Chemical mapping of a 177-nucleotide RNA with 2A3 and DMS. DMS adducts were read by reverse transcription with MarathonRT. For 2A3 the reverse transcriptase was SuperScript II with manganese. The RNA was probed in 150 mM KOAc, 10 mM MgCl2 and 150 mM bicine (pH 8.5) at 24 C. Source: RMDB library OK1LIB, as collected in RNAgym.
[RMDB]
RNA sequence: GGGAACGACUCGAGUAGAGUCGAAAAGCUCGGAGACGAGCAAGGCUGACAAAACGGUGUCCCAACCUCCACGUGGUGUCGGCUGGAUAAUGCUGCAUUAUGUUGCAUUUAUCAACUGGGAACCAAAAUAUUUAGUACUCUUCGGAGUACUAAAUAUAAAAGAAACAACAACAACAAC
Reactivity to 2A3 in 0.01 (KOAc 150mM, MgCl2 10mM, bicine 150mM(pH8.5), 24C), signal-to-noise 9, nucleotides 027 to 126: g000c000u000c000g030g020a120g020a060c010g000a000g000c010a010a090g020g000c010u010g000a010c060a030a070a070a060c170g000g010u030g070u010c010c000c000a010a020c010c010u040c030c040a170c100g110u190g010g000u010g010u010c000g010g000c000u000g020g000a010u010a020a010u010g010c020u020g010c020a070u120u130a160u300g020u020u020g000c010a010u060u090u130a030u020c030a010a020c020u030g010g000g000a000a000c000c000a030a050a010
Reactivity to DMS in 0.01 (KOAc 150mM, MgCl2 10mM, bicine 150mM(pH8.5), 24C), signal-to-noise 7, nucleotides 027 to 126: g010c000u010c010g000g010a230g000a220c000g010a020g020c000a070a020g000g000c010u000g000a020c020a060a020a060a100c120g000g000u010g010u000c000c000c010a050a040c040c000u000c030c030a100c140g000u030g010g010u010g000u000c010g000g010c010u000g020g000a010u000a000a010u000g000c000u000g000c010a160u050u040a110u030g020u000u000g010c010a010u010u010u020a020u000c000a040a050c110u000g010g000g000a080a030c010c020a080a120a120